RNA sequence: GGGAACGACUCGAGUAGAGUCGAAAAUUGGGAAAUACCGUCUGCGGAUGGGGUGGCCGAUCCGGAACGACGCGACGACCUGGAGGCCAGCGCACUCUACGACCUGCUGGAGCAUUCGGUGGCGCCAGCAGUCAUCAUGGUUCGCCAUGAUGACUGCAAAAGAAACAACAACAACAAC
Reactivity to DMS in 0.01 (KOAc 150mM, MgCl2 10mM, bicine 150mM(pH8.5), 24C), signal-to-noise 6, nucleotides 027 to 126: u020u020g000g010g010a090a090a050u020a100c190c030g010u010c020u010g020c050g020g000a050u010g000g010g000g040u030g000g000c020c000g000a060u010c020c010g010g010a130a100c140g020a040c040g020c070g000a050c160g000a120c050c020u010g000g000a100g000g000c030c040a050g000c050g010c150a080c040u010c030u000a100c070g000a060c050c040u000g010c030u010g000g000a060g010c090a080u000u010c050g020g030u000g010g000c030g000c010c040a100
Reactivity to 2A3 in 0.01 (KOAc 150mM, MgCl2 10mM, bicine 150mM(pH8.5), 24C), signal-to-noise 9, nucleotides 027 to 126: u080u030g040g010g070a060a100a030u130a100c040c000g030u030c030u060g070c040g040g030a060u070g040g020g030g060u070g060g030c010c010g030a040u010c020c000g010g030a100a060c040g090a030c040g030c040g070a070c020g040a070c000c020u030g030g030a030g020g020c010c000a020g000c040g000c010a050c020u030c030u090a050c040g070a080c010c020u050g020c020u040g040g020a040g000c020a050u050u070c040g170g020u070g030g000c030g020c000c010a010